[RMDB]
RNA sequence: GGGAACGACUCGAGUAGAGUCGAAAACGAGGUUCUUCGGAACCUCGAAAAAGCGUACUACAAGUGGUAUAGGGAGCGACUACUCCCAAAUAGGAGUAUUCGCAUCGAUCUAUACGUAACAUCUUGUAUCGCAAAAACCUACGUUUCGACGUAGGAACAAAAGCCAUAUCUUCGGAUAUGGCUUUUGAAAAGAAACAACAACAACAAC
Reactivity to DMS in 0.01 (KOAc 150mM, MgCl2 10mM, bicine 150mM(pH8.5), 24C), signal-to-noise 2, nucleotides 027 to 156: c030g030a020g040g010u020u000c000u000u000c300g060g000a030a020c000c010u000c000g000a010a030a070a120a080g030c000g010u020a090c090u000a020c020a020a030g030u010g040g010u000a020u000a010g010g010g010a050g020c000g020a030c060u000a030c000u000c000c020c020a020a090a120u000a040g010g010a030g020u000a020u000u000c000g010c000a110u010c080g010a050u010c000u000a020u000a000c000g010u010a040a060c090a090u010c010u000u000g000u000a040u010c020g020c010a020a060a060a100a130c010c000u010a010c000g000u010u000u010c270g020a090c000g010u000a000g010g000a060a100
Reactivity to 2A3 in 0.01 (KOAc 150mM, MgCl2 10mM, bicine 150mM(pH8.5), 24C), signal-to-noise 2, nucleotides 027 to 156: c020g000a010g000g020u030u000c010u020u050c090g060g010a000a000c000c000u000c030g000a000a010a000a000a000g030c030g030u120a090c050u000a000c010a000a000g000u000g010g000u030a010u010a010g040g000g000a060g000c010g000a010c010u000a000c000u010c000c020c050a120a220a110u290a040g000g000a010g010u000a000u040u010c000g000c040a140u230c020g030a030u010c000u000a000u000a000c000g040u090a000a090c020a150u110c000u030u010g010u010a030u300c040g030c040a160a000a000a000a000c000c000u000a010c010g000u000u040u250c180g040a040c010g000u000a000g000g000a010a020